[RMDB]
RNA sequence: GGGAACGACUCGAGUAGAGUCGAAAAUCUCGCAAGUUCGCUUGCGAGAGUAAUAAUUAAAAUGGGUUCAACUCCCCCCCUUUUCCGAGGGUAUCGGAAACCGUACAAACGGCUUCGGCCGUUUGAAGUAAUGGAUACCUUUCGAGGUAUCCAUUACAAAAGAAACAACAACAACAAC
Reactivity to DMS in 0.01 (KOAc 150mM, MgCl2 10mM, bicine 150mM(pH8.5), 24C), signal-to-noise 2, nucleotides 027 to 126: u000c000u010c000g030c010a010a020g030u000u000c190g020c000u000u000g010c010g000a010g000a030g000u010a050a140u010a120a160u000u010a020a040a080a070u010g000g010g000u010u010c130a130a300c130u000c010c000c000c010c000c000c020u000u000u030u000c010c000g020a010g010g000g020u000a040u000c000g000g000a000a020a060c300c120g010u000a150c020a010a010a000c000g000g000c010u000u010c220g030g000c010c010g020u000u000u000g010a070a090
Reactivity to 2A3 in 0.01 (KOAc 150mM, MgCl2 10mM, bicine 150mM(pH8.5), 24C), signal-to-noise 2, nucleotides 027 to 126: u000c000u000c000g010c000a000a000g000u070u090c140g030c160u000u030g000c010g000a010g000a010g000u000a000a160u040a020a060u180u210a040a090a020a140u120g030g010g000u090u120c040a080a080c080u090c000c000c000c000c000c000c000u000u130u000u040c010c000g000a010g040g030g040u140a020u000c000g010g050a000a010a000c040c030g090u120a090c000a000a000a000c000g010g000c000u040u040c150g140g000c000c000g010u010u000u010g000a010a020
Structure probing data (DMS and 2A3) for a 177-nucleotide construct.
The DMS profile rests on 1,633 reads.
For DMS the reverse transcriptase was MarathonRT.
2A3 adducts were read by reverse transcription with SuperScript II with manganese.
For 2A3, 2,167 sequencing reads were counted.
It was measured as part of the RMDB library M2PK50.